[RMDB]
RNA sequence: GGGAACGACUCGAGUAGAGUCGAAAAUACUACGCGGCCUCCCACCUCUCUGCCCGGAGCCGGCCGCCCGCCCAGAGACCCGGCCGGCUCCCACCGUCGCUUGCUCGACGACCCGCCGCGCCAACAACAUAGUAAAUGACUUCGGUCAUUUACUAUGAAAAGAAACAACAACAACAAC
Reactivity to DMS in 0.01 (KOAc 150mM, MgCl2 10mM, bicine 150mM(pH8.5), 24C), signal-to-noise 2, nucleotides 027 to 126: u000a100c070u010a090c100g020c040g010g020c010c070u000c000c010c020a160c110c040u000c020u000c030u000g030c030c060c090g030g000a030g020c040c010g010g020c010c000g020c060c050c050g020c040c030c060a140g020a110g000a080c130c160c040g000g000c000c010g020g000c000u000c000c000c070a050c080c020g020u000c030g010c050u020u000g020c100u000c010g010a060c010g010a100c070c010c050g020c030c020g030c040g000c030c040a060a050c110a060a180